The data come from the RNA Mapping Database (RMDB), library OK3TST. The record gives the reactivity of an RNA of 207 nucleotides to DMS and 2A3. 2A3 is a SHAPE reagent: it acylates the 2'-hydroxyl of flexible nucleotides of all four kinds. DMS adducts were read by reverse transcription with MarathonRT.
RNA sequence: GGGAACGACUCGAGUAGAGUCGAAAACUCGCGAGCCCAUAGAGGCGUGGGGAGCGACAUGAAUCAGCCUCGAUUAGAUGUGGUCGACGGUACGGCGGCGUACAGCGACCUAGUUAGAAGCCGCAAAACCGGAAGAGAUGACGCUCGACGGACGUCACAUCGGCAUAGCAUUCGUGCUAUGCCGAUGAAAAGAAACAACAACAACAAC
Reactivity to DMS in 0.01 (KOAc 150mM, MgCl2 10mM, bicine 150mM(pH8.5), 24C), signal-to-noise 1, nucleotides 027 to 156: c020u000c000g010c000g040a100g020c000c000c040a260u010a150g030a000g030g010c050g060u000g000g000g040g000a170g020c070g000a170c120a140u010g020a120a110u000c110a070g010c000c020u020c000g020a140u010u000a160g000a120u000g000u000g000g000u000c010g020a050c000g020g060u000a050c090g020g000c060g050g010c000g010u000a090c120a070g010c010g000a120c020c070u000a070g000u010u000a130g020a090a140g020c000c000g040c040a110a090a150a070c060c040g010g050a090a060g040a280g000a120u010g000a060c020g000c100u050c050g020a110c100g040g000a100c000g000u000c010a120
Reactivity to 2A3 in 0.01 (KOAc 150mM, MgCl2 10mM, bicine 150mM(pH8.5), 24C), signal-to-noise 2, nucleotides 027 to 156: c000u030c000g020c020g010a300g170c020c000c000a000u020a010g010a000g010g000c020g020u000g000g000g030g000a030g000c010g040a110c060a160u170g140a130a050u130c110a020g000c000c000u050c050g020a110u080u180a070g100a150u120g130u120g040g050u040c000g010a070c000g010g000u010a010c030g000g000c000g000g030c010g000u030a020c030a010g000c000g060a130c010c000u020a000g020u040u000a100g010a120a030g000c000c000g000c000a030a000a000a280c070c060g070g000a090a000g030a000g000a060u030g000a000c000g000c040u000c070g050a070c050g050g000a000c030g000u020c030a010